[RMDB]
RNA sequence: GGGAACGACUCGAGUAGAGUCGAAAAGAUAUGGAUCGUAUGACGGGAGAAACCUUCGGAAACGAAGGAAUUUCAUCGAUCGUCUACGAUCCUAAGUCAAACGCCACCGUCUUCGGACGGUGGCGAACAUAACGCAUAAGUUCGCUUAUGCGUUAUGAAAAGAAACAACAACAACAAC
Reactivity to 2A3 in 0.01 (KOAc 150mM, MgCl2 10mM, bicine 150mM(pH8.5), 24C), signal-to-noise 4, nucleotides 027 to 126: g000a000u030a010u080g000g000a000u010c000g010u010a040u300g000a010c020g060g180g090a190g020a040a020a010c020c010u020u000c000g010g000a020a030a010c010g010a000a010g000g000a040a110u030u050u020c050a100u210c150g300a290u140c010g010u000c010u000a000c000g000a000u010c000c000u000a000a000g010u000c020a110a050a090c030g000c010c000a000c000c000g020u000c010u070u130c300g180g010a000c000g020g000u000g000g000c000g000a000a000
Reactivity to DMS in 0.01 (KOAc 150mM, MgCl2 10mM, bicine 150mM(pH8.5), 24C), signal-to-noise 6, nucleotides 027 to 126: g000a030u000a150u000g000g000a000u000c010g010u000a000u020g020a010c000g020g010g030a260g010a020a040a090c010c000u000u000c000g020g000a050a040a080c000g020a010a010g010g000a050a060u000u010u000c050a250u010c300g000a180u000c010g010u000c000u000a000c000g000a010u000c000c000u000a000a060g000u000c010a100a100a230c040g010c000c000a010c000c000g000u000c000u000u010c280g010g000a010c000g000g020u000g000g000c000g010a020a050